This 177-nucleotide RNA was probed chemically with DMS and 2A3.
RNA sequence: GGGAACGACUCGAGUAGAGUCGAAAAGAUAUGGAUCCUUUCUAGCGAAGAACGUGGUGAAGAAGUGUUCUAUGUCGGAAACGACAUAGAACAUGUAAAGCCACGGGAGCUGAAAGGAUCCUAAGUCGACUGUCUAAUACUUCGGUAUUAGACAGUCAAAAGAAACAACAACAACAAC
Reactivity to DMS in 0.01 (KOAc 150mM, MgCl2 10mM, bicine 150mM(pH8.5), 24C), signal-to-noise 3, nucleotides 027 to 126: g030a110u010a300u020g010g030a020u010c020c000u000u020u010c010u020a030g050c000g030a170a210g010a100a250c020g020u000g000g000u000g000a050a190g010a280a300g010u000g020u000u000c000u010a000u000g000u010c000g010g010a110a110a240c000g010a020c010a000u000a000g000a060a000c000a000u000g010u000a020a100a300g000c000c000a000c000g000g000g010a070g040c000u010g030a000a010a010g000g000a000u000c000c000u010a010a020g010u000c140
Reactivity to 2A3 in 0.01 (KOAc 150mM, MgCl2 10mM, bicine 150mM(pH8.5), 24C), signal-to-noise 2, nucleotides 027 to 126: g040a040u100a050u220g030g010a020u000c030c000u030u040u000c190u300a070g000c020g270a300a040g030a170a070c010g000u000g020g020u030g050a240a300g020a020a000g120u000g000u000u030c000u000a000u000g010u000c000g010g040a080a090a050c000g000a020c010a000u000a000g000a000a000c000a000u000g000u010a000a000a000g000c000c020a000c010g000g020g000a020g000c000u000g010a000a000a000g000g010a000u000c000c000u000a030a010g080u020c080

The DMS profile rests on 1,347 reads. The reactions ran in a buffer of 150 mM KOAc, 10 mM MgCl2 and 150 mM bicine (pH 8.5), at 24 C. Reactivities are rounded to 0.1 and cut off at 0 and 3. For 2A3, 3,721 sequencing reads were counted. Source: RMDB library TTRINS, as collected in RNAgym.